[RMDB]
RNA sequence: GGGAACGACUCGAGUAGAGUCGAAAAGGAGGAAGGAACGGGCAACGGUAGGUCAGUAUGCCCCGAAUGUGCUGGGCGACACGCGGGCUACAAUGGCCGAGACAGUGGGAUGCAACGCCGAAAGGCGAUAAUUCACGAAAUUCGUUUCGUGAAUUAUAAAAGAAACAACAACAACAAC
Reactivity to DMS in 0.01 (KOAc 150mM, MgCl2 10mM, bicine 150mM(pH8.5), 24C), signal-to-noise 9, nucleotides 027 to 126: g010g000a090g010g010a090a060g000g010a080a090c150g010g000g000c070a070a070c090g010g020u010a100g000g010u000c030a060g010u000a050u020g000c060c000c010c050g010a080a080u020g020u010g010c050u010g010g010g010c040g010a120c040a040c110g010c100g010g000g010c010u000a040c080a080a080u010g010g000c010c020g000a120g000a050c090a050g010u000g000g000g010a100u010g010c120a080a180c030g010c000c000g000a070a060a130g010g010c010g000
Reactivity to 2A3 in 0.01 (KOAc 150mM, MgCl2 10mM, bicine 150mM(pH8.5), 24C), signal-to-noise 9, nucleotides 027 to 126: g050g010a020g020g020a070a040g040g020a070a040c040g010g020g010c020a030a020c010g040g050u090a040g010g030u030c020a010g010u040a060u200g020c010c000c000c000g060a100a120u220g010u030g030c050u100g020g080g040c040g020a020c010a000c030g030c050g000g000g000c000u000a010c040a050a180u070g010g000c000c010g000a000g010a010c020a010g020u070g020g020g000a010u050g020c040a050a010c010g000c000c000g020a040a020a000g000g000c000g000
An RNA of 177 nucleotides, treated with DMS and 2A3 and read out base by base. It was measured as part of the RMDB libraries RFM100 and RFMREP. The RNA was probed in 150 mM KOAc, 10 mM MgCl2 and 150 mM bicine (pH 8.5) at 24 C.